[RMDB]
RNA sequence: GGGAACGACUCGAGUAGAGUCGAAAAAUGUGUACUUCUGCAGGUUAAGCUCGGCGCUCAAGAGUUGUAUCCACCGGGUAGUUUCCAACUCCGGCUGGUGUGAAGAAGGAGCCGUUCCACUCAGGACGAUUUGUCAAUUGUUCGCAAUUGACAAAUCAAAAGAAACAACAACAACAAC
Reactivity to DMS in 0.01 (KOAc 150mM, MgCl2 10mM, bicine 150mM(pH8.5), 24C), signal-to-noise 2, nucleotides 027 to 126: a040u000g010u000g000u000a060c080u000u000c080u000g000c030a010g020g010u000u010a080a080g010c050u000c040g020g020c100g010c080u000c030a110a110g000a080g000u000u000g010u010a100u000c020c020a050c060c010g000g000g010u000a060g010u010u000u010c060c040a070a120c070u000c020c030g000g010c150u000g010g020u000g000u020g010a060a100g010a080a080g000g000a030g000c020c020g010u010u000c000c000a080c180u000c110a080g000g010a130c230
Reactivity to 2A3 in 0.01 (KOAc 150mM, MgCl2 10mM, bicine 150mM(pH8.5), 24C), signal-to-noise 1, nucleotides 027 to 126: a020u130g040u000g030u090a070c060u040u170c040u060g020c060a010g080g030u080u080a080a010g000c010u010c020g050g000c070g000c020u030c050a000a070g050a000g010u100u070g030u090a220u010c020c020a020c020c040g060g000g000u060a030g010u040u030u080c070c020a020a030c020u000c010c000g110g050c080u010g010g090u110g050u030g100a130a160g040a060a040g050g020a010g000c000c030g000u020u000c010c000a060c040u130c040a020g030g070a000c030

An RNA of 177 nucleotides, treated with DMS and 2A3 and read out base by base. The data come from the RNA Mapping Database (RMDB), library VIROID. Values cover nucleotides 27 to 126. The 2A3 profile rests on 1,124 reads. The reactions ran in a buffer of 150 mM KOAc, 10 mM MgCl2 and 150 mM bicine (pH 8.5), at 24 C.